[RMDB]
Source: RMDB library TTRDEL, as collected in RNAgym. Chemical mapping of a 177-nucleotide RNA with DMS and 2A3. For 2A3, 1,402 sequencing reads were counted. The DMS profile rests on 857 reads. Reactivities are given for positions 27 through 126.
RNA sequence: GGGAACGACUCGAGUAGAGUCGAAAAGAUAUGGAGAGUGGAGCUUGGAUUUAUACGUAACAUCACUCGGAAACGAGUGUGGUAUUGUCAGCUCGCUCCUAAGUCAAAAGCACUGUUCGCAGUGCAAGCACUUUGACACGUUCGCGUGUCAAAGUGCAAAAGAAACAACAACAACAAC
Reactivity to DMS in 0.01 (KOAc 150mM, MgCl2 10mM, bicine 150mM(pH8.5), 24C), signal-to-noise 1, nucleotides 027 to 126: g000a030u000a240u010g010g010a070g000a030g000u000g070g010a000g030c000u000u000g030g010a080u000u000u000a020u000a050c040g020u010a080a100c170a060u010c010a000c000u000c050g000g000a050a070a150c000g000a030g040u000g010u000g010g000u000a000u000u000g000u010c010a040g010c010u000c000g000c010u000c000c000u010a040a170g020u040c040a060a090a210a110g010c010a000c000u000g000u000u000c290g000c020a020g020u000g000c000a060a070
Reactivity to 2A3 in 0.01 (KOAc 150mM, MgCl2 10mM, bicine 150mM(pH8.5), 24C), signal-to-noise 2, nucleotides 027 to 126: g000a000u120a110u230g040g010a080g010a040g270u300g170g000a030g010c080u060u090g110g040a070u030u300u010a060u050a020c060g100u080a110a120c010a250u230c010a020c010u000c080g050g020a040a080a010c010g000a000g000u010g000u000g010g000u020a030u040u110g030u030c040a000g020c000u040c000g010c000u010c000c000u040a110a070g010u080c060a000a000a160a120g000c000a010c010u020g020u050u100c230g060c050a010g000u010g030c010a000a000